Structure probing data (2A3 and DMS) for a 177-nucleotide construct. The reactions ran in a buffer of 150 mM KOAc, 10 mM MgCl2 and 150 mM bicine (pH 8.5), at 24 C. For 2A3, 463 sequencing reads were counted. The DMS profile rests on 2,025 reads. For DMS the reverse transcriptase was MarathonRT. The data come from the RNA Mapping Database (RMDB), library OK1LIB.
RNA sequence: GGGAACGACUCGAGUAGAGUCGAAAAUUUCAUUUUAUUUGAUUGUUAAAAAUUGAAACUGAAUGAGCGGAAAACUAUACAUCACCAAAGCAACGUUUCCUCAACCCAGUACGUCACUAGGCGAAAGAAUAUCCCGGAGAUUCGUCUCCGGGAUAUUAAAAGAAACAACAACAACAAC
Reactivity to 2A3 in 0.01 (KOAc 150mM, MgCl2 10mM, bicine 150mM(pH8.5), 24C), signal-to-noise 1, nucleotides 027 to 126: u010u100u140c010a000u040u030u070u140a100u050u040u020g040a040u000u110g170u280u170a050a150a000a000a060u020u190g010a000a000a050c040u000g040a040a050u050g000a000g080c070g000g030a000a090a090a000c010u050a180u050a300c040a100u090c060a000c120c040a170a030a000g040c000a010a200c000g020u010u050u000c000c000u010c060a020a020c020c000c010a070g060u020a050c010g000u000c070a040c070u070a120g000g040c010g010a070a070a050g060
Reactivity to DMS in 0.01 (KOAc 150mM, MgCl2 10mM, bicine 150mM(pH8.5), 24C), signal-to-noise 2, nucleotides 027 to 126: u020u000u000c000a030u020u000u020u030a070u020u020u030g000a140u000u000g020u030u020a030a050a050a070a020u000u000g020a000a000a100c170u040g000a070a010u040g000a090g020c060g000g000a120a070a010a090c040u020a040u000a090c070a070u010c000a050c030c050a030a130a100g030c070a050a060c050g020u030u000u000c000c020u020c040a110a110c020c030c010a010g000u010a050c070g000u020c010a070c120u020a050g000g000c020g000a070a020a080g000